[RMDB]
This 177-nucleotide RNA was probed chemically with 2A3 and DMS. DMS adducts were read by reverse transcription with MarathonRT. The 2A3 profile rests on 2,935 reads. Values are in units of 0.01, from 0 to 300, in steps of 10. The DMS profile rests on 5,356 reads.
RNA sequence: GGGAACGACUCGAGUAGAGUCGAAAACAAAUCCAGCUGGUGAUGGAGCCGGAGGCGCGCGGUGACCGGAGGCGGUGGCCUGUCGUGCUGGCAGAAAUUGCGGAGCAUGGUGGCCGGUCCGCAAUGACAGACCGUGUUUUUUCGAAAACACGGUCUGAAAAGAAACAACAACAACAAC
Reactivity to 2A3 in 0.01 (KOAc 150mM, MgCl2 10mM, bicine 150mM(pH8.5), 24C), signal-to-noise 2, nucleotides 027 to 126: c070a010a080a010u010c020c000a030g000c060u060g030g080u070g040a140u120g040g040a030g000c000c010g040g020a020g020g000c010g000c000g000c010g070g000u020g050a050c040c010g030g010a050g070g000c010g000g010u020g040g010c000c000u050g050u040c020g000u010g010c020u020g030g000c050a000g050a050a190a040u090u080g000c000g020g000a010g030c020a040u040g010g030u070g040g000c000c000g000g020u010c000c000g020c010a010a100u100g020a010
Reactivity to DMS in 0.01 (KOAc 150mM, MgCl2 10mM, bicine 150mM(pH8.5), 24C), signal-to-noise 2, nucleotides 027 to 126: c120a050a100a100u060c070c010a090g020c040u000g000g010u020g000a090u010g010g000a160g000c070c030g000g010a070g000g020c060g030c060g020c050g020g020u020g000a080c030c010g040g000a110g000g010c020g000g010u020g010g010c020c020u000g030u010c020g050u010g000c020u000g030g000c030a040g000a030a080a090u040u010g000c010g010g010a050g000c000a040u000g000g010u000g000g000c030c030g000g030u020c000c030g020c050a020a030u040g000a240